[RMDB]
RNA sequence: GGGAACGACUCGAGUAGAGUCGAAAAGAUAUGGAAGAUGAUCACGCGACGAUCUAUAAGUGUCGGAAACGACACAAUAGGGAGCGUGCCAUCUUCCUAAGUCAAAAGUCUCUCUUCGGAGAGACAACACUGUAAGAUACUUCGGUAUCUUACAGUGAAAAGAAACAACAACAACAAC
Reactivity to DMS in 0.01 (KOAc 150mM, MgCl2 10mM, bicine 150mM(pH8.5), 24C), signal-to-noise 7, nucleotides 027 to 126: g010a020u000a130u010g000g000a020a010g010a010u000g000a080u000c010a010c010g040c000g020a080c300g000a010u020c000u000a010u000a070a150g010u000g010u000c000g020g000a040a030a070c000g010a010c000a000c020a070a020u000a010g000g000g000a010g030c010g040u000g010c300c010a000u000c000u000u000c000c000u000a010a080g000u010c010a100a060a150a130g010u000c000u000c000u000c000u000u010c240g030g000a020g010a010g000a000c010a050a160
Reactivity to 2A3 in 0.01 (KOAc 150mM, MgCl2 10mM, bicine 150mM(pH8.5), 24C), signal-to-noise 7, nucleotides 027 to 126: g010a010u020a010u070g000g000a000a010g000a010u020g020a060u200c010a010c010g060c010g210a300c010g000a100u000c040u000a020u010a300a270g010u000g000u000c010g000g000a030a010a010c000g000a000c000a000c000a030a010u020a000g000g000g000a010g010c000g000u010g000c000c000a000u000c000u000u000c000c000u000a010a000g000u000c020a030a030a070a170g010u000c000u000c000u010c020u050u100c300g160g000a000g000a000g000a010c000a000a010